[RMDB]
The record gives the reactivity of an RNA of 207 nucleotides to 2A3 and DMS. Values are in units of 0.01, from 0 to 300, in steps of 10. Reactivities are given for positions 27 through 156.
RNA sequence: GGGAACGACUCGAGUAGAGUCGAAAAGGAUCGUGGGUGGGGAGAUUCCUCUUAACCAGCGGCCCACGUUUGGAGACUGAUUUGGGCUCCAGGCUACGCCUUGAAAUUGGGACAGAGAGUGGCGCAGAUCUCAGCCCGGAGACUCCCUCUGCCUGUGUCUAUAAUUGGGAUUCGUCCCAAUUAUAGAAAAAGAAACAACAACAACAAC
Reactivity to 2A3 in 0.01 (KOAc 150mM, MgCl2 10mM, bicine 150mM(pH8.5), 24C), signal-to-noise 4, nucleotides 027 to 156: g050g020a060u090c070g040u120g010g000g020u110g000g050g050g010a030g020a030u110u160c030c000u050c010u030u070a100a060c010c010a000g020c040g030g000c020c030c020a020c050g000u000u020u070g000g010a030g010a030c040u100g090a300u240u110u240g080g050g000c000u010c010c010a010g000g000c020u060a020c040g000c000c010u090u100g090a090a090a080u180u080g020g000g030a030c060a070g050a010g020a040g050u190g040g030c050g000c100a030g060a190u020c030u010c060a020g000c000c010c000g000g000a030g010a010c040u030c020c010c010u040c060u060g070c000c020u080g040u050g030
Reactivity to DMS in 0.01 (KOAc 150mM, MgCl2 10mM, bicine 150mM(pH8.5), 24C), signal-to-noise 2, nucleotides 027 to 156: g030g010a040u000c040g010u000g010g070g030u000g000g020g040g020a060g010a140u010u000c030c020u000c030u010u010a060a150c030c010a100g040c080g000g030c010c000c030a090c110g010u010u000u000g020g000a060g000a060c030u000g030a240u000u000u010g040g010g000c010u010c020c010a040g000g010c000u000a170c180g020c010c010u010u000g010a020a080a160u000u010g020g040g000a190c070a110g010a080g010a100g020u000g000g000c050g020c040a100g000a070u000c040u000c030a100g000c040c020c020g000g000a190g020a110c040u000c010c000c010u000c030u010g000c040c020u000g020u000g020